[RMDB]
RNA sequence: GGGAACGACUCGAGUAGAGUCGAAAAGUGACCCGAUAGCCAGACCGGGUGUAGUCGGGGACCGUCACGAUCCCGAAGUCGGCACGGAGCUUCCUCGAGACGGACGGCGCGUGAACCUUCACCGCUGACCGACGAGUAGAUUCGUCUACUCGUCGGUAAAAGAAACAACAACAACAAC
Reactivity to 2A3 in 0.01 (KOAc 150mM, MgCl2 10mM, bicine 150mM(pH8.5), 24C), signal-to-noise 4, nucleotides 027 to 126: g020u040g040a090c000c020c000g020a080u060a030g040c010c020a060g070a150c030c060g070g010g000u060g030u130a080g020u010c020g010g000g040g060a040c040c040g050u040c030a020c090g030a070u070c030c050c000g030a060a030g070u070c020g020g010c070a030c070g040g020a060g010c030u070u070c010c020u030c020g080a090g010a050c040g050g030a030c020g000g020c000g000c060g020u040g030a080a170c010c050u080u040c030a030c030c000g000c040u030g080
Reactivity to DMS in 0.01 (KOAc 150mM, MgCl2 10mM, bicine 150mM(pH8.5), 24C), signal-to-noise 6, nucleotides 027 to 126: g020u000g010a140c020c020c000g000a060u000a090g020c020c040a100g010a130c160c130g010g000g020u000g000u010a070g010u000c010g000g010g020g010a110c070c090g000u000c050a110c050g000a080u000c020c010c050g020a080a110g010u000c030g010g000c070a120c050g000g010a120g000c050u000u000c020c010u000c050g000a080g010a070c050g000g010a210c030g000g000c020g020c160g020u000g010a050a170c180c150u000u000c010a030c010c010g000c030u000g000

Structure probing data (2A3 and DMS) for a 177-nucleotide construct. For 2A3, 5,947 sequencing reads were counted. For 2A3 the reverse transcriptase was SuperScript II with manganese. The reactions ran in a buffer of 150 mM KOAc, 10 mM MgCl2 and 150 mM bicine (pH 8.5), at 24 C.